[RMDB]
RNA sequence: GGGAACGACUCGAGUAGAGUCGAAAAACAGAAGCAUAUAAGCAUUCUCCAUUGGAGCAAAGGCUUUCUUUGGCUACAGCUAGGGCAAGCCGGCAAGUCAUCACAAAAAGGCAUGGACUCCAUUAGGAACGAUCAGAACAUUCGUGUUCUGAUCGUUAAAAGAAACAACAACAACAAC
Reactivity to DMS in 0.01 (KOAc 150mM, MgCl2 10mM, bicine 150mM(pH8.5), 24C), signal-to-noise 5, nucleotides 027 to 126: a090c180a090g020a080a050g010c040a090u050a110u040a050a150g000c030a130u000u000c010u000c010c000a150u000u000g010g010a030g010c120a080a100a110g000g000c000u000u010u000c010u000u000u000g000g000c010u050a060c300a100g000c000u000a010g000g000g000c070a010a050g000c010c010g000g000c100a050a050g010u000c020a070u030c090a100c270a050a040a060a100a050g010g010c030a070u010g000g020a180c010u000c010c000a040u000u000a090g010g010
Reactivity to 2A3 in 0.01 (KOAc 150mM, MgCl2 10mM, bicine 150mM(pH8.5), 24C), signal-to-noise 5, nucleotides 027 to 126: a000c100a020g060a090a010g020c080a030u150a040u090a180a080g030c050a120u100u010c010u000c030c010a090u030u060g000g010a030g000c060a050a060a050g020g020c000u000u020u000c010u010u030u020g020g000c010u120a130c100a120g000c000u030a040g020g000g000c010a010a000g020c000c000g010g010c010a040a010g010u010c030a080u060c030a060c110a150a130a040a040a010g030g000c020a030u080g110g020a090c000u000c010c000a000u020u080a060g020g030
The record gives the reactivity of an RNA of 177 nucleotides to DMS and 2A3. It was measured as part of the RMDB libraries RFM100 and RFMREP. High DMS reactivity at an A or C suggests that its Watson-Crick edge is free. For 2A3 the reverse transcriptase was SuperScript II with manganese. The RNA was probed in 150 mM KOAc, 10 mM MgCl2 and 150 mM bicine (pH 8.5) at 24 C. For DMS the reverse transcriptase was MarathonRT.